RNA sequence: GGGAACGACUCGAGUAGAGUCGAAAAGCUGUAAACUAGGAUGUUUUCCACAUUAUAGGGUUGUUGAGGGAAUUCAGUAAGCUAACUUAUGUGCCUAGUUCAUAGCAGGUGGCCAUUACUAUUAGUUUCUACAUCAGCCUGUUAUCUCCUUCCAUCAUGACUAAUUAGUAUUCGUACUAAUUAGUCAAAAAGAAACAACAACAACAAC
Reactivity to DMS in 0.01 (KOAc 150mM, MgCl2 10mM, bicine 150mM(pH8.5), 24C), signal-to-noise 5, nucleotides 027 to 156: g040c030u000g030u000a030a040a060c020u010a040g020g010a100u010g020u000u010u000u000c040c050a300c070a090u000u000a140u000a130g020g030g020u000u000g020u010u000g010a260g010g010g010a080a100u000u000c070a090g020u000a050a080g010c060u000a050a060c040u000u000a050u000g020u000g010c000c020u000a050g020u010u000c040a040u000a040g030c040a080g020g020u010g000g020c030c040a100u000u000a060c060u000a110u000u010a100g010u000u000u010c030u000a110c050a070u000c010a090g020c040c010u000g010u010u000a070u000c030u000c030c040u000u000c030c030a100u000c110a220
Reactivity to 2A3 in 0.01 (KOAc 150mM, MgCl2 10mM, bicine 150mM(pH8.5), 24C), signal-to-noise 3, nucleotides 027 to 156: g030c030u040g020u050a030a000a050c030u040a020g010g070a040u060g060u050u060u090u030c030c000a040c020a040u090u130a090u210a150g030g030g030u030u010g010u010u020g020a050g010g040g030a060a040u090u050c030a020g030u050a080a000g030c040u030a030a070c040u120u080a050u070g040u000g040c000c000u010a010g010u030u040c020a030u040a010g000c010a020g080g030u030g010g000c070c020a080u100u070a030c020u040a050u120u020a060g040u060u010u030c050u070a080c010a060u070c020a040g020c000c000u010g020u050u040a090u020c040u010c020c040u080u020c050c020a110u090c010a070
An RNA of 207 nucleotides, treated with DMS and 2A3 and read out base by base. 2A3 adducts were read by reverse transcription with SuperScript II with manganese. It was measured as part of the RMDB library OK3TST. The reactions ran in a buffer of 150 mM KOAc, 10 mM MgCl2 and 150 mM bicine (pH 8.5), at 24 C.